Record summary: The data come from the RNA Mapping Database (RMDB), library OK2TRN. The record gives the reactivity of an RNA of 177 nucleotides to 2A3 and DMS. DMS adducts were read by reverse transcription with MarathonRT. For 2A3, 21,740 sequencing reads were counted. Values cover nucleotides 27 to 126.
[RMDB]
RNA sequence: GGGAACGACUCGAGUAGAGUCGAAAACGGCCGGGCUCAUGAUGGCCAGCCACAGGCCGCCGUCGCUGGCGAAGUUCUUCUGCGGUGCGAAGUAGUAGGCGUCGGUCUCGGCGAUGUCGACCGGUAGCGUCUCAGAUAAAUUCGUUUAUCUGAGACGAAAAGAAACAACAACAACAAC
Reactivity to 2A3 in 0.01 (KOAc 150mM, MgCl2 10mM, bicine 150mM(pH8.5), 24C), signal-to-noise 8, nucleotides 027 to 126: c030g030g000c020c010g080g010g000c020u070c130a110u210g110a070u150g140g000c020c010a010g030c000c010a080c030a040g020g000c000c000g010c000c010g010u020c010g000c030u040g050g020c030g030a080a020g040u120u100c010u070u010c030u090g050c040g040g070u100g070c070g080a100a010g020u060a000g010u020a110g030g020c010g010u020c000g030g050u020c050u020c040g020g000c010g020a030u070g020u040c030g020a050c020c010g040g050u060a060g060
Reactivity to DMS in 0.01 (KOAc 150mM, MgCl2 10mM, bicine 150mM(pH8.5), 24C), signal-to-noise 9, nucleotides 027 to 126: c100g010g010c010c020g010g010g010c040u000c120a080u010g010a110u010g010g010c020c070a180g010c010c040a070c100a100g010g010c010c010g010c030c010g010u000c090g010c040u000g000g010c030g010a080a100g010u000u000c030u000u000c040u000g020c040g010g010u010g020c080g000a080a120g000u010a050g000u000a080g010g000c020g000u000c010g010g000u000c040u000c060g010g010c010g000a050u000g000u000c030g010a070c010c010g000g010u000a120g010